[RMDB]
RNA sequence: GGGAACGACUCGAGUAGAGUCGAAAAGAUAGCUCUAACUGCCUUAGCUAACCACUCCUAGUCUGGUAUGUCAUCUGGUUAUAGUUUUAUAUGGCCUUCCAUCCAGAUUGGAAGCCUUUGGCCAUAUAAAGAAUAAUCGUUUCGACGAUUAUUCUUUAAAAGAAACAACAACAACAAC
Reactivity to DMS in 0.01 (KOAc 150mM, MgCl2 10mM, bicine 150mM(pH8.5), 24C), signal-to-noise 6, nucleotides 027 to 126: g010a120u000a050g010c040u000c080u000a090a140c090u000g000c020c020u000u000a080g010c020u010a070a110c070c070a110c070u000c020c020u000a060g000u000c040u000g010g000u000a030u010g010u000c080a050u000c050u000g000g020u010u010a110u010a090g010u000u010u010u000a060u000a000u000g000g000c000c000u000u000c030c010a080u000c030c020a070g010a110u010u000g000g010a040a090g010c120c080u000u010u000g000g010c000c030a020u000a030u000
Reactivity to 2A3 in 0.01 (KOAc 150mM, MgCl2 10mM, bicine 150mM(pH8.5), 24C), signal-to-noise 2, nucleotides 027 to 126: g040a060u120a020g020c020u000c020u060a130a100c050u030g040c000c010u030u050a010g000c010u030a060a030c020c010a030c020u000c000c020u030a030g070u030c040u030g020g030u110a040u070g090u050c020a080u030c040u030g050g000u030u110a070u070a150g040u000u050u200u010a050u000a000u030g010g020c000c000u030u000c010c000a020u000c010c000a020g030a140u010u060g000g010a000a030g070c020c000u050u060u080g000g000c000c000a010u020a000u010

The record gives the reactivity of an RNA of 177 nucleotides to DMS and 2A3. The 2A3 profile rests on 3,091 reads. For DMS, 9,699 sequencing reads were counted.